[RMDB]
RNA sequence: GGGAACGACUCGAGUAGAGUCGAAAAGAUAUGGAUGGACCCCCUCGCUUUUAGGGUGGAGAUCGUGCAUCGGAAACGAUGCCCGAUCUAUGAAGCCCUAAAAGAAACGGGGCGUCCAUCCUAAGUCGCCUAUUGUAAUGUUCGCAUUACAAUAGGCAAAAGAAACAACAACAACAAC
Reactivity to 2A3 in 0.01 (KOAc 150mM, MgCl2 10mM, bicine 150mM(pH8.5), 24C), signal-to-noise 2, nucleotides 027 to 126: g030a020u100a040u150g000g000a000u000g000g000a010c000c000c020c030c030u080c190g300c050u020u030u000u000a020g020g000g010u030g020g010a010g000a000u000c000g000u010g020c000a000u000c010g030g010a040a050a020c020g010a000u010g010c030c010c010g020a010u020c010u040a300u040g010a000a010g010c000c010c000u020a020a010a000a010g000a080a080a010c080g000g010g000g010c070g020u000c000c000a020u000c000c000u000a000a010g020u000c100
Reactivity to DMS in 0.01 (KOAc 150mM, MgCl2 10mM, bicine 150mM(pH8.5), 24C), signal-to-noise 3, nucleotides 027 to 126: g000a040u000a190u000g010g010a040u000g000g000a030c010c020c000c010c000u010c300g020c020u000u000u000u000a020g000g010g030u000g000g010a010g010a010u000c010g020u010g000c010a000u000c010g010g000a080a100a180c010g010a020u010g000c010c050c000g000a000u000c000u000a110u020g000a210a300g000c000c010c000u000a000a000a010a020g000a080a070a090c250g000g000g000g010c180g010u000c000c000a000u010c000c000u010a000a110g000u020c030